This 177-nucleotide RNA was probed chemically with 2A3.

RNA sequence: GGGAACGACUCGAGUAGAGUCGAAAAUGUCGCCGGCCUCGUCUUCCGCUGAUCGACCUGGUCUGGCGCCUCGCGUUGUCGCUUGCCCUUACAUGCACGCAGCGGCAGCCGAGGAGCGGGAGCGCGGAUCGGAGCGGCCGUUCGCGGCCGCUCCGAUAAAAGAAACAACAACAACAAC
Reactivity to 2A3 in 0.01 (KOAc 150mM, MgCl2 10mM, bicine 150mM(pH8.5), 24C), signal-to-noise 1, nucleotides 027 to 126: u180g000u100c060g000c050c000g000g050c070c000u110c080g180u110c000u050u000c000c000g010c090u040g000a150u000c000g160a300c100c000u070g060g130u210c180u100g140g000c030g030c020c000u000c000g020c040g040u000u020g000u000c000g000c000u020u240g010c000c000c110u040u300a080c210a280u160g050c190a040c150g010c010a000g000c000g000g010c000a000g000c000c000g000a000g020g020a010g020c000g010g010g000a030g010c010g030c010g020g030

The reactions ran in a buffer of 150 mM KOAc, 10 mM MgCl2 and 150 mM bicine (pH 8.5), at 24 C.